[RMDB]
RNA sequence: GGGAACGACUCGAGUAGAGUCGAAAAGAUAUGGAGAUCCGAAGACAGAGAGCCUCCCAGGUAGCUGGAGUGUCGGAAACGACAUGACAGCUAUAAUCUGGGAGGCUCUUCGAGGAUCUCCUAAGUCGCAAUAUGGAAAGUUCGCUUUCCAUAUUGCAAAAGAAACAACAACAACAAC
Reactivity to DMS in 0.01 (KOAc 150mM, MgCl2 10mM, bicine 150mM(pH8.5), 24C), signal-to-noise 2, nucleotides 027 to 126: g040a090u010a300u000g000g010a030g010a010u000c000c000g000a160a120g010a070c300a160g000a040g000a010g010c010c000u000c000c000c010a000g000g020u010a010g000c030u030g000g020a300g010u000g010u010c000g000g000a140a060a240c000g040a010c000a030u000g000a300c020a000g000c010u010a000u000a180a060u020c000u000g010g000g010a000g020g000c010u000c000u000u000c040g000a100g010g000a010u000c000u000c000c000u030a010a080g020u010c160